[RMDB]
RNA sequence: GGGAACGACUCGAGUAGAGUCGAAAAUUCCCCGUGAUUACAAACAUUGCUGAAACCUGCCCACCCGAAAGCUUCGAGAUUGGCGUGGGGGCCGAUCGAGGAAAAGCUGACAACGGUGGGAACCAUGCUAGGGCCAUACUUUCGAGUAUGGCCCUAGAAAAGAAACAACAACAACAAC
Reactivity to DMS in 0.01 (KOAc 150mM, MgCl2 10mM, bicine 150mM(pH8.5), 24C), signal-to-noise 1, nucleotides 027 to 126: u060u000c000c000c000c290g030u090g000a070u000u000a020c090a040a050a130c160a140u000u010g000c090u010g040a000a130a110c120c170u000g040c000c000c000a080c010c000c040g000a140a090a010g000c000u010u060c000g000a220g040a000u000u000g000g080c010g080u010g040g000g000g030g030c000c000g030a000u000c000g030a300g000g000a030a030a060a060g000c000u000g000a030c090a080a280c300g000g000u000g000g000g000a010a080c050c000a150u000g050
Reactivity to 2A3 in 0.01 (KOAc 150mM, MgCl2 10mM, bicine 150mM(pH8.5), 24C), signal-to-noise 1, nucleotides 027 to 126: u000u050c020c000c000c000g000u030g050a030u100u120a080c050a010a210a000c040a040u000u040g000c000u160g110a080a100a050c010c030u050g030c010c000c000a000c000c000c000g010a050a030a030g000c000u060u050c020g030a030g000a050u020u020g010g030c030g040u300g050g040g050g040g000c020c000g020a010u000c010g040a080g020g050a120a130a100a000g020c000u020g050a010c060a070a010c040g030g000u010g010g010g000a000a000c010c000a050u170g010